[RMDB]
RNA sequence: GGGAACGACUCGAGUAGAGUCGAAAAUAUUUUUUCUCACAUCCAACAUAAAAGUGUCAAAGUUGGACAAGUGUACAAUAAACGAAUCGAUUUGUACCAAUCUAUUCAUCAAGCUAUACAUGUAUUCAAUUAUUGAAACGCGAUUGUCGUGAAAAUACGAAAAUAGAGAGUUCGCUCUCUAUUUUCGAAAAGAAACAACAACAACAAC
Reactivity to 2A3 in 0.01 (KOAc 150mM, MgCl2 10mM, bicine 150mM(pH8.5), 24C), signal-to-noise 4, nucleotides 027 to 156: u100a110u070u080u010u020u050u020c010u000c020a010c000a030u010c010c010a010a000c010a050u200a110a210a050a030g150u130g080u110c100a140a070a000g000u020u010g000g020a010c010a100a080g020u020g000u060a030c040a070a110u070a150a120a030c090g020a020a030u030c020g010a010u030u030u130g110u080a030c030c000a000a020u010c010u050a020u030u050c020a060u030c050a150a020g060c030u090a020u050a160c060a050u100g060u090a090u020u100c030a070a070u070u040a040u040u120g030a110a070a030c010g010c020g170a140u040u150g080u150c020g010u020g030a060a030a020a010u130a070
Reactivity to DMS in 0.01 (KOAc 150mM, MgCl2 10mM, bicine 150mM(pH8.5), 24C), signal-to-noise 2, nucleotides 027 to 156: u000a000u000u000u000u000u000u000c020u010c010a070c070a150u000c210c070a060a070c060a150u000a050a090a100a150g010u000g000u000c020a030a040a110g010u000u010g000g010a010c050a030a120g040u000g020u000a020c030a040a100u010a110a080a100c080g000a010a050u000c070g010a070u000u000u000g000u000a150c150c150a010a000u000c020u000a020u010u000c020a030u000c050a070a220g070c190u000a050u000a020c070a010u000g000u000a050u000u000c000a010a060u010u000a130u020u030g010a010a040a040c040g020c060g010a130u000u020g000u000c010g010u000g000a060a070a030a130u000a220